The record gives the reactivity of an RNA of 177 nucleotides to DMS and 2A3.
[RMDB]
RNA sequence: GGGAACGACUCGAGUAGAGUCGAAAACGGUCGAAAUUCGUUUCGACCGAAUAUGCUAGCUGAGCACAGCAGCAAUGCUAAGCUGAAAGCCAGCUGCAAGCGCGAGUUCGGCGUUCGCGCCGAACAAGUUUCAGGCAAGUUUCGACUUGCCUGAAACAAAAGAAACAACAACAACAAC
Reactivity to DMS in 0.01 (KOAc 150mM, MgCl2 10mM, bicine 150mM(pH8.5), 24C), signal-to-noise 1, nucleotides 027 to 126: c000g020g000u000c000g000a010a000a030u000u010c250g020u020u000u000c000g000a000c000c010g000a010a030u030a060u000g010c020u020a060g050c010u000g020a100g020c000a170c070a090g000c000a000g010c060a050a060u000g020c120u020a110a110g000c030u000g000a100a070a070g030c040c010a020g020c010u000g000c050a070a070g020c140g000c160g020a130g020u010u000c010g000g020c000g000u010u000c160g010c000g030c000c010g020a010a030c000a030a070
Reactivity to 2A3 in 0.01 (KOAc 150mM, MgCl2 10mM, bicine 150mM(pH8.5), 24C), signal-to-noise 2, nucleotides 027 to 126: c030g020g020u020c000g030a030a000a020u090u080c160g100u020u000u000c000g020a000c000c000g010a000a000u090a030u060g020c040u080a020g000c000u000g040a020g100c010a030c020a200g040c010a000g000c070a120a040u230g010c010u050a120a080g000c000u010g040a120a030a000g000c000c000a000g000c000u010g010c060a060a020g090c080g040c040g100a090g080u000u000c000g020g000c000g060u010u020c120g000c010g000c000c010g000a000a000c010a010a010